[RMDB]
RNA sequence: GGGAACGACUCGAGUAGAGUCGAAAAUCGCAUACGCCAGGGCUGCGCCAAAGAUCAGGAUGAACAGAGCAAACCCAAUCCAGAGCGGAGACAGCACCCACCACCAUGACCAACUGAUAUAGCCAGUCAGCUUCAGCACGAUGAAAACGAUGGUCAGCUAGUGUGGUACAUUCGUGUACCACACUAGAAAAGAAACAACAACAACAAC
Reactivity to 2A3 in 0.01 (KOAc 150mM, MgCl2 10mM, bicine 150mM(pH8.5), 24C), signal-to-noise 4, nucleotides 027 to 156: u060c020g000c040a040u060a150c070g040c060c050a060g000g060g000c020u030g020c040g010c020c020a100a100a030g050a070u130c040a020g050g020a040u080g050a060a050c030a050g090a030g070c040a060a050a120c010c010c020a010a030u050c030c030a020g010a010g080c040g000g040a030g010a020c030a010g040c030a040c010c020c000a040c020c010a050c020c010a040u060g030a010c010c000a020a000c030u010g030a040u070a010u060a180g080c030c010a020g030u050c020a020g010c010u040u050c020a020g040c070a010c080g070a050u090g090a020a030a070a010c050g030a020u030g010g000u000c010a000g020
Reactivity to DMS in 0.01 (KOAc 150mM, MgCl2 10mM, bicine 150mM(pH8.5), 24C), signal-to-noise 2, nucleotides 027 to 156: u000c030g030c030a130u000a080c080g020c030c010a100g040g040g000c000u000g040c010g030c040c010a040a130a140g000a060u000c020a160g020g020a130u010g000a080a100c080a120g020a090g030c000a100a070a050c000c000c000a070a130u000c050c030a070g000a150g010c030g030g000a150g000a120c030a100g000c050a080c000c020c010a120c100c020a060c030c020a130u000g020a030c040c030a040a180c010u020g000a040u000a070u010a120g020c060c050a230g040u030c040a060g030c020u000u000c030a070g000c010a050c050g030a170u000g010a050a070a050a040c080g020a100u000g000g010u000c030a060g020